About this RNA:
This 177-nucleotide RNA was probed chemically with 2A3.
[RMDB]
RNA sequence: GGGAACGACUCGAGUAGAGUCGAAAAGUGCAAGAGCUGCACCGUGUGCAAUAAGACAGUCUCUUUCCAUCUCACCAAACCUGAGACCACCUUCACGAGCUCUACCUUCAGUAGGCUGACGUGUAAGGCUCCACCACUGCUUCGGCAGUGGUGGAGCAAAAGAAACAACAACAACAAC
Reactivity to 2A3 in 0.01 (KOAc 150mM, MgCl2 10mM, bicine 150mM(pH8.5), 24C), signal-to-noise 1, nucleotides 027 to 126: g080u060g010c060a020a010g050a050g160c060u000g020c020a010c020c020g110u140g010u060g090c040a020a160u100a240a010g020a010c000a030g040u020c000u040c000u060u020u010c030c020a040u000c010u030c020a050c040c000a060a100a010c000c000u120g000a040g010a040c070c030a010c000c020u060u020c040a000c000g010a010g000c000u040c000u150a000c060c010u100u100c000a040g000u000a020g040g000c000u030g100a000c000g000u020g100u090a010a000g070
Background
The reactions ran in a buffer of 150 mM KOAc, 10 mM MgCl2 and 150 mM bicine (pH 8.5), at 24 C. 2A3 adducts were read by reverse transcription with SuperScript II with manganese.